[RMDB]
Structure probing data (DMS and 2A3) for a 207-nucleotide construct. The RNA was probed in 150 mM KOAc, 10 mM MgCl2 and 150 mM bicine (pH 8.5) at 24 C. For 2A3 the reverse transcriptase was SuperScript II with manganese.
RNA sequence: GGGAACGACUCGAGUAGAGUCGAAAAGACCAGCUGACCCCGAUUCAGGUCACCAAGGAUGGUCGCGUGUUCGGUCACCUCGCAGGGUGGAAUACGAAGCACAUCGGGUAUCGGCCCGAGCAGAACGUGCGACCACCCCGCACGCGCACCGACUACAAGAUUAUAGACUCUUCGGAGUCUAUAAUCUAAAAGAAACAACAACAACAAC
Reactivity to DMS in 0.01 (KOAc 150mM, MgCl2 10mM, bicine 150mM(pH8.5), 24C), signal-to-noise 1, nucleotides 027 to 156: g000a050c000c020a080g080c060u020g050a040c000c010c040c030g020a300u030u040c170a040g000g000u010c000a000c040c100a110a120g000g000a080u000g020g010u000c030g010c050g000u000g020u010u010c010g080g040u000c040a080c010c010u000c100g050c010a050g000g030g070u000g000g020a160a160u020a150c090g040a120a180g030c100a090c060a170u010c000g030g010g040u010a110u000c070g000g000c010c000c000g010a050g050c040a150g010a100a150c020g000u030g030c010g010a290c010c010a030c000c020c000c000g030c020a040c000g000c030g050c050a030c000c000g010a060c060u010a110c060a150
Reactivity to 2A3 in 0.01 (KOAc 150mM, MgCl2 10mM, bicine 150mM(pH8.5), 24C), signal-to-noise 2, nucleotides 027 to 156: g020a020c010c020a020g060c090u070g010a020c000c030c020c050g010a000u130u220c140a070g000g020u030c020a020c070c070a140a030g070g010a130u080g010g000u000c000g000c030g000u010g010u000u050c050g000g090u120c080a120c050c080u080c100g040c060a010g010g000g000u000g000g050a140a030u170a230c060g090a120a020g020c010a010c000a030u010c000g000g000g020u050a110u120c000g090g090c000c000c000g000a010g000c020a060g050a190a020c130g010u020g000c010g040a050c000c000a000c000c000c000c000g020c010a030c020g030c000g000c020a000c020c000g020a010c000u070a050c010a100